The record gives the reactivity of an RNA of 177 nucleotides to 2A3.
RNA sequence: GGGAACGACUCGAGUAGAGUCGAAAAUGCGGGCCGCACUCACACGCCGAUGGGAGGGCUGAGGGGAGCAGCAACACGCAGAUGACCCCAUGAAAUAUAAACGAUGUGCGGACACGCAGAGGGUCAGCUCGCUCGAGGACUUCGGUCCUCGAGCGAGAAAAGAAACAACAACAACAAC
Reactivity to 2A3 in 0.01 (KOAc 150mM, MgCl2 10mM, bicine 150mM(pH8.5), 24C), signal-to-noise 1, nucleotides 027 to 126: u090g000c010g030g000g000c020c000g030c000a030c000u030c000a090c000a010c110g090c000c020g000a090u020g090g050g000a240g070g000g000c030u000g120a050g010g070g030g000a150g060c000a000g000c000a000a170c070a060c140g080c130a050g000a240u040g010a120c030c030c010c030a010u080g140a060a060a000u300a040u090a100a100a000c130g060a010u220g030u030g010c060g000g080a040c130a000c210g000c000a000g010a120g050g020g000u030c030a000g000
2A3 adducts were read by reverse transcription with SuperScript II with manganese.
The reactions ran in a buffer of 150 mM KOAc, 10 mM MgCl2 and 150 mM bicine (pH 8.5), at 24 C.